The record gives the reactivity of an RNA of 177 nucleotides to 2A3 and DMS. The DMS profile rests on 1,249 reads. The RNA was probed in 150 mM KOAc, 10 mM MgCl2 and 150 mM bicine (pH 8.5) at 24 C. For 2A3 the reverse transcriptase was SuperScript II with manganese.
RNA sequence: GGGAACGACUCGAGUAGAGUCGAAAAGCACUUUGUACGAGCUCCGCGAGAAGACCUCAAUCACCGUGAGCGCCGCGAGCAAGUACUUUGCAAAUACGCUCUAUGGAUACAGAGGACAAGGAUUGUAGCUACCAUCCUGAUUCGUCAGGAUGGUAGCAAAAGAAACAACAACAACAAC
Reactivity to 2A3 in 0.01 (KOAc 150mM, MgCl2 10mM, bicine 150mM(pH8.5), 24C), signal-to-noise 3, nucleotides 027 to 126: g020c030a030c090u100u100u150g020u020a000c040g000a000g010c010u060c070c070g000c070g040a120g050a260a050g090a170c030c020u000c010a070a170u170c020a070c170c040g040u030g000a010g000c080g020c010c020g030c000g000a020g030c000a000a020g010u020a020c050u000u040u030g000c000a000a060a060u100a060c070g000c010u000c010u060a060u100g040g000a040u120a190c090a080g020a030g070g020a050c070a010a040g080g020a110u080u160g120u110a040
Reactivity to DMS in 0.01 (KOAc 150mM, MgCl2 10mM, bicine 150mM(pH8.5), 24C), signal-to-noise 3, nucleotides 027 to 126: g010c040a060c300u020u040u000g010u020a020c040g000a300g020c000u000c080c070g010c060g000a160g020a120a080g020a170c090c000u020c040a030a090u000c090a070c230c200g040u000g000a040g010c110g050c060c010g000c060g030a080g020c020a050a220g020u000a000c030u000u000u000g020c040a050a060a100u000a080c080g000c020u000c000u000a050u000g040g020a080u000a090c150a060g010a010g010g020a030c060a100a110g010g000a170u010u020g000u020a060